RNA sequence: GGGAACGACUCGAGUAGAGUCGAAAACUCCAGGCUUCUGCCCACUGCCUGCGCCUAAAGCCAAUGCCAUGUGUUUCAUAUUUUAGUGACCAGAGCACAGUGAGGCACGUCAGACCCAUUAGCUUUCUAAUCACCACACCAGCUGUGUGAGUUGGGGGAUCAUCGAACAGUUCGCUGUUCGAUGAUCAAAAGAAACAACAACAACAAC
Reactivity to 2A3 in 0.01 (KOAc 150mM, MgCl2 10mM, bicine 150mM(pH8.5), 24C), signal-to-noise 1, nucleotides 027 to 156: c020u000c000c020a010g000g010c000u130u020c000u170g020c010c000c000a000c020u020g040c040c000u020g000c100g040c010c020u130a100a060a060g000c020c030a050a010u090g040c020c060a220u140g110u000g040u060u120u180c090a030u110a220u140u050u050u020a100g030u090g070a160c010c110a050g000a040g000c060a000c030a000g040u030g030a280g000g040c000a010c020g010u050c010a030g030a210c010c010c010a040u070u120a020g050c010u060u130u040c010u020a060a110u090c010a000c140c000a000c040a020c010c050a020g050c090u090g050u000g000u010g090a010g010u060u090g000g000g000g020
This 207-nucleotide RNA was probed chemically with 2A3. The RNA was probed in 150 mM KOAc, 10 mM MgCl2 and 150 mM bicine (pH 8.5) at 24 C. For 2A3 the reverse transcriptase was SuperScript II with manganese. The data come from the RNA Mapping Database (RMDB), library OK3TST.